[RMDB]
RNA sequence: GGGAACGACUCGAGUAGAGUCGAAAAUCACGCAAUAUGCUUUUCUUGCUACCGCACUGGCCUGCUUCGCUCAGGCGUUUUGCGGUCAUCGUCGCGCUAUUAUGGAAGGGCCAGGUGGCCUGUGGUGAUAGAACGACUACUUCGGUAGUCGUUCUAUAAAAGAAACAACAACAACAAC
Reactivity to DMS in 0.01 (KOAc 150mM, MgCl2 10mM, bicine 150mM(pH8.5), 24C), signal-to-noise 3, nucleotides 027 to 126: u000c030a060c080g020c100a090a080u010a050u020g010c030u000u000u020u000c020u010u010g010c060u010a080c030c030g000c010a050c080u000g000g000c010c000u000g000c090u010u000c220g000c170u010c030a030g010g000c000g020u010u000u000u000g020c010g020g010u000c070a020u000c050g010u000c150g010c110g000c020u000a050u000u020a120u010g030g010a160a120g000g000g010c030c030a150g000g020u000g020g010c030c030u000g020u000g000g000u000g000
Reactivity to 2A3 in 0.01 (KOAc 150mM, MgCl2 10mM, bicine 150mM(pH8.5), 24C), signal-to-noise 2, nucleotides 027 to 126: u060c020a020c040g060c000a000a100u060a080u300g000c020u010u060u120u110c060u030u110g000c050u050a050c000c030g000c000a010c050u000g060g000c000c000u040g000c040u280u130c090g010c100u080c010a020g000g000c000g000u010u000u020u030g020c000g000g030u000c010a040u030c010g060u020c010g020c000g000c060u060a070u210u000a090u260g120g000a090a130g130g040g000c030c010a080g050g030u100g050g050c020c010u040g010u060g010g030u070g000